[RMDB]
RNA sequence: GGGAACGACUCGAGUAGAGUCGAAAAUGGAGCCUACCGGAUCUCGUUCCUCCUCUUCGGGAGGAACGCGGUCGCCUACGAGGCCCUGCGUACGGCUAGAGGAGGUGGGUGAGGAGGAUACGGAUCCCGCAACAUAAUAGUUCGCUAUUAUGUUGCGAAAAGAAACAACAACAACAAC
Reactivity to DMS in 0.01 (KOAc 150mM, MgCl2 10mM, bicine 150mM(pH8.5), 24C), signal-to-noise 8, nucleotides 027 to 126: u010g000g010a210g010c010c010u000a090c090c030g010g010a010u000c010u000c010g010u000u000c000c000u000c000c000u000c270u000u010c250g010g000g010a030g010g010a000a000c010g020c060g000g000u000c020g010c040c030u010a060c110g000a090g010g020c010c030c040u010g020c040g010u000a040c200g010g000c030u010a110g010a150g010g000a120g000g000u000g010g010g020u000g010a120g010g000a080g010g000a110u010a060c080g000g000a110u000c030c040
Reactivity to 2A3 in 0.01 (KOAc 150mM, MgCl2 10mM, bicine 150mM(pH8.5), 24C), signal-to-noise 6, nucleotides 027 to 126: u090g050g010a040g010c010c010u040a090c060c030g030g010a010u000c060u020c030g010u010u010c010c010u020c030c010u110c090u300u280c150g020g010g000a030g010g020a010a000c000g000c000g010g000u010c020g030c000c010u060a070c080g030a140g040g000c000c000c040u050g000c010g000u030a080c120g030g000c050u070a040g030a070g120g030a050g030g060u140g020g010g020u110g010a050g030g040a030g010g010a060u090a190c050g040g050a040u040c040c010
Structure probing data (DMS and 2A3) for a 177-nucleotide construct. Conditions: 150 mM KOAc, 10 mM MgCl2 and 150 mM bicine (pH 8.5), 24 C.